[RMDB]
RNA sequence: GGGAACGACUCGAGUAGAGUCGAAAAAAAAAGAGUUUCCAGGAACCUAAUACGAAGCAAAGUUGUUGAAUACGUACUUCCUAUAUGGUUGACUUAACCAUUCCCUAGGUUCCUGGAAGCUAAAAAACGGAAUACGUAAGUUCGCUUACGUAUUCCGAAAAGAAACAACAACAACAAC
Reactivity to DMS in 0.01 (KOAc 150mM, MgCl2 10mM, bicine 150mM(pH8.5), 24C), signal-to-noise 1, nucleotides 027 to 126: a040a030a070a120a130g000a030g020u000u000u000c000c020a000g000g000a010a010c000c010u000a030a050u000a030c210g000a040a020g000c090a020a050a090g010u000u000g010u030u000g000a140a130u000a010c010g020u000a070c020u000u000c020c050u000a030u000a020u000g000g010u000u000g000a100c190u010u020a030a010c010c010a030u000u010c110c090c100u020a000g000g010u000u000c000c000u000g000g000a010a000g010c000u000a000a010a070a040a030a100
Reactivity to 2A3 in 0.01 (KOAc 150mM, MgCl2 10mM, bicine 150mM(pH8.5), 24C), signal-to-noise 1, nucleotides 027 to 126: a000a000a000a120a000g070a000g000u010u000u000c000c000a000g030g010a020a010c000c000u010a080a050u040a170c060g020a040a020g000c140a220a040a110g000u070u030g070u130u140g200a180a070u050a020c020g030u000a020c020u020u000c000c080u060a030u010a010u260g020g020u040u060g100a300c040u110u130a000a010c000c000a000u050u050c020c000c010u010a000g000g000u000u000c000c000u000g000g000a010a000g000c000u040a070a000a000a000a070a000